Structure probing data (DMS and 2A3) for a 177-nucleotide construct. Reactivities are given for positions 27 through 126. The DMS profile rests on 2,349 reads. The reactions ran in a buffer of 150 mM KOAc, 10 mM MgCl2 and 150 mM bicine (pH 8.5), at 24 C. 2A3 adducts were read by reverse transcription with SuperScript II with manganese.
[RMDB]
RNA sequence: GGGAACGACUCGAGUAGAGUCGAAAAAACUGGACGUCCUGGUCGUCCAGGGAGACGCCACCGACCUCGACGUGUUGCAGGACGCCGAGAUCGAGACAGCGGACGUCGUCGCGGCCGUGACCGAUAACUAACUACCCGUGUUCGCACGGGUAGUUAGAAAAGAAACAACAACAACAAC
Reactivity to DMS in 0.01 (KOAc 150mM, MgCl2 10mM, bicine 150mM(pH8.5), 24C), signal-to-noise 3, nucleotides 027 to 126: a080a060c080u010g010g010a030c010g020u000c030c030u010g020g000u020c040g020u000c010c010a170g000g020g010a160g020a060c060g000c000c020a300c090c000g010a070c000c000u000c030g010a000c020g020u000g010u010u010g020c160a120g000g010a030c020g030c000c000g000a020g000a020u000c020g010a140g000a140c200a160g000c060g000g000a050c030g010u000c030g020u000c070g000c060g000g000c010c030g010u000g000a170c000c010g010a090u000a050a190
Reactivity to 2A3 in 0.01 (KOAc 150mM, MgCl2 10mM, bicine 150mM(pH8.5), 24C), signal-to-noise 1, nucleotides 027 to 126: a010a000c080u070g000g000a040c020g030u030c020c030u070g120g070u220c020g030u000c040c010a020g010g050g000a160g000a000c030g040c020c010a020c010c000g010a030c000c020u000c010g010a010c020g020u070g080u120u160g050c070a070g030g120a000c030g030c020c020g040a020g000a010u040c000g000a030g020a080c040a060g030c020g030g030a070c000g040u020c010g030u000c030g000c010g030g000c060c040g060u040g020a040c020c060g000a070u020a110a060